This 177-nucleotide RNA was probed chemically with 2A3 and DMS.
For DMS the reverse transcriptase was MarathonRT.
For 2A3 the reverse transcriptase was SuperScript II with manganese.
Conditions: 150 mM KOAc, 10 mM MgCl2 and 150 mM bicine (pH 8.5), 24 C.
Source: RMDB library RFMREP, as collected in RNAgym.
RNA sequence: GGGAACGACUCGAGUAGAGUCGAAAAAUUUGAGCCUCUCCCAAUUCUCUAAUAACCUCACUGGAGGUUAACCAGGCAGGGCUCAAUAUACCUCUUCAGCAGUAGCAUAGUUUCUGAUUGAGUGUGGCUAUGAAAUUAAGUUCGCUUAAUUUCAUAGAAAAGAAACAACAACAACAAC
Reactivity to 2A3 in 0.01 (KOAc 150mM, MgCl2 10mM, bicine 150mM(pH8.5), 24C), signal-to-noise 5, nucleotides 027 to 126: a000u030u020u040g000a000g000c000c010u120c020u020c020c010c010a020a080u180u040c060u000c020u060a060a180u040a090a080c010c000u020c050a160c190u220g300g010a000g010g000u010u020a020a010c030c020a020g020g000c020a000g020g000g000c000u000c020a000a000u030a000u020a000c000c000u000c000u060u020c010a020g000c020a050g040u120a010g030c040a090u060a120g060u030u060u020c030u010g070a150u090u060g010a050g060u120g020u040g060g000
Reactivity to DMS in 0.01 (KOAc 150mM, MgCl2 10mM, bicine 150mM(pH8.5), 24C), signal-to-noise 5, nucleotides 027 to 126: a100u000u000u000g000a020g010c000c010u000c150u000c060c010c030a100a160u010u010c060u010c050u000a100a160u010a010a020c000c000u000c010a190c300u010g020g010a010g010g000u000u000a000a100c170c190a050g000g020c260a080g000g000g010c010u000c010a010a020u010a100u000a110c040c010u000c040u010u000c030a020g020c090a060g010u010a040g020c100a090u000a100g010u000u010u000c010u000g000a090u000u000g000a040g010u000g010u000g010g010